[RMDB]
RNA sequence: GGGAACGACUCGAGUAGAGUCGAAAAUUAAGCUGGUCCUCGAAGACUCAAACGUGCAUUGCCACUAGCUCCACAGAAUCGGAGUACGUCGCGCUCACCAGGACUGUGCAGGAAGGCAUAUGGCUACCCGGUACAGGCCGUUCGCGGCCUGUACCGGAAAAGAAACAACAACAACAAC
Reactivity to 2A3 in 0.01 (KOAc 150mM, MgCl2 10mM, bicine 150mM(pH8.5), 24C), signal-to-noise 1, nucleotides 027 to 126: u060u050a060a000g000c000u010g000g210u000c000c000u090c130g020a010a000g010a000c050u000c140a060a130a290c130g030u050g000c000a080u000u300g010c000c000a060c000u000a000g000c000u030c050c000a080c010a190g050a060a000u040c200g050g000a040g090u000a000c030g030u050c000g010c000g020c010u150c040a110c040c050a070g000g000a000c000u000g000u000g010c080a000g060g060a070a040g130g000c050a060u060a000u190g060g000c000u000a090c000